[RMDB]
RNA sequence: GGGAACGACUCGAGUAGAGUCGAAAAGGAGGUGUAGAUCAGGUACGCGGGCUGAGCCGGAUCGGUCGGGCGGACCAGCUCGCGCGGGGCCAGCGGCGCGUCGGAGAUGUCGUCGAGCUCGACCUCACAUUAUCAUACUGUUCGCAGUAUGAUAAUGAAAAGAAACAACAACAACAAC
Reactivity to DMS in 0.01 (KOAc 150mM, MgCl2 10mM, bicine 150mM(pH8.5), 24C), signal-to-noise 9, nucleotides 027 to 126: g010g010a050g010g010u000g010u010a060g000a090u010c080a090g010g010u010a090c050g010c020g000g000g010c020u000g000a110g010c010c010g000g010a090u010c100g020g010u010c070g010g010g020c010g000g010a040c030c020a030g000c010u000c010g010c020g010c060g010g010g010g010c040c040a090g010c040g010g000c020g010c040g010u000c040g020g010a120g010a050u000g010u010c040g010u000c020g010a120g010c030u000c020g000a050c010c010u000c120a210
Reactivity to 2A3 in 0.01 (KOAc 150mM, MgCl2 10mM, bicine 150mM(pH8.5), 24C), signal-to-noise 9, nucleotides 027 to 126: g090g020a030g000g020u080g030u160a080g020a170u120c080a040g040g090u110a030c020g000c010g010g000g000c010u010g010a010g020c010c020g060g050a240u120c050g020g120u070c040g010g020g010c000g000g000a040c010c000a000g000c000u000c000g000c000g000c020g010g010g010g010c020c010a050g040c010g040g000c010g000c010g040u040c050g070g090a190g010a050u060g090u190c020g010u010c020g020a030g010c010u010c020g030a030c000c000u020c000a060